RNA sequence: GGGAACGACUCGAGUAGAGUCGAAAAGCCGUUCAUCAACGACGCAUUUGCGCCACGGAUUCUGUUUUCGCCUGGAUUGGUCGCCCUGCUCGACGAGCUGGACAGCUGGCCAGAACCGCAGACCGGGCACCACUACGACGGGCUUUGUGCCUUGUCAGCUUUUCAGCAAUUUCGAUUGCUGAAAAGCAAAAGAAACAACAACAACAAC
Reactivity to 2A3 in 0.01 (KOAc 150mM, MgCl2 10mM, bicine 150mM(pH8.5), 24C), signal-to-noise 1, nucleotides 027 to 156: g010c030c010g000u070u150c020a250u070c010a120a070c050g060a030c030g010c100a060u040u040u230g020c070g000c010c040a140c040g040g000a000u110u000c020u080g080u060u030u110u110c100g000c090c010u140g040g020a100u000u080g000g000u000c000g000c010c000c000u000g020c000u000c030g190a160c110g000a030g000c000u020g040g010a030c010a150g000c090u260g000g060c020c000a060g000a070a040c050c040g010c000a010g010a010c000c000g000g020g070c030a050c030c000a040c020u140a040c070g020a000c010g000g030g000c000u070u060u210g090u100g010c000c000u020u050g030u020c010a000